An RNA of 177 nucleotides, treated with DMS and 2A3 and read out base by base. DMS adducts were read by reverse transcription with MarathonRT. Reactivities are given for positions 27 through 126. For 2A3 the reverse transcriptase was SuperScript II with manganese. In probing experiments dimethyl sulfate is read out at A N1 and C N3, which are open when not base-paired.
[RMDB]
RNA sequence: GGGAACGACUCGAGUAGAGUCGAAAAUACGCUGGUAGCAGCAAGUAGCAGCUCUAUCCGCAGAUGAGCGGAAUAUACAUAUGAAAAUGGAUCUCGAUAGAGUUGCUACAAUCGAGACCAUUAGAGAAUAUACCAGCUAGUUCGCUAGCUGGUAUAUAAAAGAAACAACAACAACAAC
Reactivity to DMS in 0.01 (KOAc 150mM, MgCl2 10mM, bicine 150mM(pH8.5), 24C), signal-to-noise 6, nucleotides 027 to 126: u050a080c180g010c010u010g000g010u040a100g010c020a020g000c030a140a190g010u000a000g000c010a000g000c000u000c000u000a200u000c010c020g000c040a130g000a160u050g010a160g010c020g000g000a040a050u020a050u020a130c250a130u040a140u030g010a080a050a050a010u000g000g000a120u000c010u000c030g020a050u020a050g010a030g010u000u000g000c000u000a010c010a040a030u010c010g010a010g000a050c020c000a010u010u010a090g010a170g000a130
Reactivity to 2A3 in 0.01 (KOAc 150mM, MgCl2 10mM, bicine 150mM(pH8.5), 24C), signal-to-noise 7, nucleotides 027 to 126: u240a040c080g000c020u030g050g120u280a160g210c030a000g010c020a040a030g010u020a010g000c000a000g000c000u000c010u010a050u020c020c010g000c040a020g090a300u230g090a080g040c040g000g040a010a000u160a000u020a020c080a010u180a090u230g160a120a090a020a000u030g030g060a160u000c000u010c020g000a000u020a030g010a000g000u020u010g000c000u010a000c010a000a010u020c010g000a000g000a000c010c000a000u020u080a040g080a010g050a140